[RMDB]
RNA sequence: GGGAACGACUCGAGUAGAGUCGAAAACCACUACUUCGGUAGUGGACAAUCCUUCUUCGGAAGGAUUGAACAUUGGCGCUACGGCGCCAAUGAGGCAUUCGUUCGCGAAUGCCAACAAAUAAAAAGUUAAAUACUCAAGCGUGAGCUUGAGAAGGUAUGAAGUCCUAUUCGCUCCUGAUAGGAUCGACUUCAUAUUGCUUAUAUAUGUGCUAACGCACAUAUAUAAAUGCUCAUGCAAAACUGCAUGAAUGCCCCUAAGGGAUGCAAAUACCUUAUUCGUAAGGUAUAAAAGAAACAACAACAACAAC
Reactivity to 2A3 in 0.01 (KOAc 150mM, MgCl2 10mM, bicine 150mM(pH8.5), 24C), signal-to-noise 3, nucleotides 027 to 266: c000c000a010c000u000a000c000u040u070c100g120g010u000a000g000u000g000g010a010c000a000a000u010c000c000u000u000c000u020u080c180g140g000a000a000g000g000a000u000u010g000a040a000c000a000u000u000g010g000c010g000c000u030a040c300g150g000c010g010c000c010a000a000u020g000a010g010g020c000a000u000u010c010g040u050u080c260g040c020g110a010a000u010g000c010c000a020a010c030a010a080a030u300a060a070a040a000a010g070u160u170a170a100a050u130a120c000u010c020a000a000g000c020g050u120g130a030g000c010u000u020g020a000g010a020a010g020g000u010a000u010g000a000a000g010u000c010c000u000a030u030u040c060g000c030u010c000c010u020g010a020u020a030g000g010a020u050c090g040a000c000u000u010c000a000u020a020u030u110g010c000u020u010a000u000a000u000a000u000g000u000g000c050u180a140a070c150g000c010a000c010a000u010a010u000a000u010a000a020a020u090g010c010u000c020a000u010g000c000a070a120a170a300c180u040g000c010a020u000g020a090a080u070g070c030c000c030c000u040a060a060g040g000g000a010u180g000c010a000a050
Reactivity to DMS in 0.01 (KOAc 150mM, MgCl2 10mM, bicine 150mM(pH8.5), 24C), signal-to-noise 2, nucleotides 027 to 266: c010c000a020c000u000a010c000u010u010c110g020g020u000a000g010u010g000g020a150c000a010a010u000c010c010u000u000c000u000u000c180g000g020a010a030g000g000a000u000u000g000a230a300c020a000u000u000g000g040c050g030c010u010a070c220g040g000c000g000c000c000a000a000u000g000a170g000g000c000a000u000u000c000g010u000u020c250g010c000g000a000a000u000g010c000c000a050a080c190a090a170a090u010a050a090a090a080a190g000u010u030a090a060a180u010a160c020u000c000a040a010g000c000g000u010g010a170g020c010u000u000g010a010g000a110a050g000g000u000a020u000g000a010a010g000u000c000c040u000a000u000u000c200g010c070u000c000c010u000g000a030u000a010g000g010a050u010c180g010a150c000u000u010c000a010u000a030u010u010g000c160u000u000a000u000a000u000a000u000g000u000g010c000u010a130a150c300g010c000a000c000a000u010a000u000a000u010a010a010a050u010g010c070u000c000a000u000g000c000a010a070a100a120c180u000g010c030a010u010g000a040a070u010g000c020c060c010c020u000a080a050g000g010g000a020u000g020c020a050a070
This 307-nucleotide RNA was probed chemically with 2A3 and DMS.